An RNA of 177 nucleotides, treated with DMS and 2A3 and read out base by base. 2A3 adducts were read by reverse transcription with SuperScript II with manganese. For DMS the reverse transcriptase was MarathonRT.

[RMDB]
RNA sequence: GGGAACGACUCGAGUAGAGUCGAAAAGCAUCAAAUUGAUUAUGUUGAGUUAUCGUAUUUUGGUGGUUUUGGUUAUAGGGAUUUGAGGAAGGUAGCUAAUCCAGAUGGUACGUGGUAUAAGGAUUCACCAAAAUGGGAGUUUCGACUCCCAUUUUGGAAAAGAAACAACAACAACAAC
Reactivity to DMS in 0.01 (KOAc 150mM, MgCl2 10mM, bicine 150mM(pH8.5), 24C), signal-to-noise 3, nucleotides 027 to 126: g000c040a020u000c040a040a060a080u010u010g000a060u010u000a030u000g000u010u010g010a200g010u000u000a040u000c030g010u010a070u010u000u000u000g010g020u000g010g020u000u000u000u010g010g010u000u000a070u000a100g010g010g020a080u000u000u000g020a090g010g010a090a040g020g010u000a070g010c060u010a060a070u000c030c030a080g020a100u000g010g020u000a050c130g020u000g000g020u000a060u010a070a110g000g010a100u000u010c100a150
Reactivity to 2A3 in 0.01 (KOAc 150mM, MgCl2 10mM, bicine 150mM(pH8.5), 24C), signal-to-noise 2, nucleotides 027 to 126: g000c000a040u090c050a020a030a110u120u180g010a100u020u120a040u130g150u080u150g060a100g070u050u110a070u190c000g000u040a120u030u100u050u040g050g000u040g050g160u040u040u010u040g070g010u050u050a060u060a150g080g010g000a090u070u070u050g030a040g010g050a050a020g050g000u040a020g050c030u040a010a050u080c020c010a030g010a030u130g030g000u040a010c010g040u000g060g000u020a120u000a110a040g090g020a070u100u110c030a000